Chemical mapping of a 177-nucleotide RNA with DMS and 2A3. For DMS, 5,933 sequencing reads were counted. For DMS the reverse transcriptase was MarathonRT. The RNA was probed in 150 mM KOAc, 10 mM MgCl2 and 150 mM bicine (pH 8.5) at 24 C.
RNA sequence: GGGAACGACUCGAGUAGAGUCGAAAAUGGUGUUAAGUGGAAUAAGUGGAAAAAUAUACAUAUAUGUACAGGGGGCUACAUAUAUGUAUAUGCCCCCUAUCCUCAGUAUAAGUAGGUAUAAGGUGGAAUGAUAUCGUAGGUUCGCCUACGAUAUCAUAAAAGAAACAACAACAACAAC
Reactivity to DMS in 0.01 (KOAc 150mM, MgCl2 10mM, bicine 150mM(pH8.5), 24C), signal-to-noise 3, nucleotides 027 to 126: u030g000g000u010g010u000u000a090a180g020u000g000g000a090a030u010a060a110g010u040g000g000a020a060a060a060a020u000a000u000a020c000a010u000a000u000a010u010g000u000a020c120a130g000g010g010g000g030c160u010a010c010a000u000a000u000a020u000g010u000a000u000a000u010g010c060c010c000c010c010u010a020u000c010c000u000c020a140g030u020a100u060a040a120g010u030a000g030g030u010a020u010a030a020g000g000u010g000g020a130
Reactivity to 2A3 in 0.01 (KOAc 150mM, MgCl2 10mM, bicine 150mM(pH8.5), 24C), signal-to-noise 2, nucleotides 027 to 126: u120g030g010u030g020u070u090a110a060g050u070g120g030a030a080u040a130a070g030u120g060g040a120a060a040a010a000u000a000u000a000c000a020u010a000u000a000u000g010u010a030c140a150g000g020g000g130g000c000u010a000c000a000u020a010u000a000u000g000u010a000u000a000u000g000c000c000c010c000c000u020a010u060c000c000u010c010a020g080u180a130u080a300a010g090u180a020g000g060u170a040u020a140a080g000g010u050g030g040a110
The 2A3 profile rests on 1,143 reads.